[RMDB]
RNA sequence: GGGAACGACUCGAGUAGAGUCGAAAAGAUAUGGAUAGCUGGAGCGCAGGACUAUGCUUCGGAAACGAAGCACGAAUCCUGGCGUUGAAAGCUAUCCUAAGUCAAAACUCUUGCUUCGGCAAGAGAAGUUAUUCGGUUACUUCGGUAACCGAAUAACAAAAGAAACAACAACAACAAC
Reactivity to DMS in 0.01 (KOAc 150mM, MgCl2 10mM, bicine 150mM(pH8.5), 24C), signal-to-noise 2, nucleotides 027 to 126: g010a030u010a300u010g000g000a000u000a000g030c000u000g010g030a180g020c010g000c000a010g000g010a020c050u000a200u000g000c000u010u000c000g000g010a070a090a160c010g000a000a000g000c000a010c090g000a050a150u000c000c000u010g030g020c010g050u000u030g000a260a120a000g000c000u000a010u010c010c000u000a020a040g010u010c030a090a060a090a120c000u000c000u010u010g000c000u000u000c300g020g040c000a010a010g010a000g010a010a110
Reactivity to 2A3 in 0.01 (KOAc 150mM, MgCl2 10mM, bicine 150mM(pH8.5), 24C), signal-to-noise 1, nucleotides 027 to 126: g010a010u090a020u120g000g000a010u000a000g000c000u020g030g070a030g010c060g020c040a020g000g000a010c050u040a030u030g000c000u020u010c000g010g020a040a070a030c020g020a030a000g030c000a000c020g100a090a290u000c000c010u040g220g160c010g000u070u090g060a080a020a000g000c010u000a000u000c000c000u010a050a000g030u000c000a000a040a090a220c000u000c000u000u010g000c000u050u020c220g150g000c010a000a000g000a000g010a010a010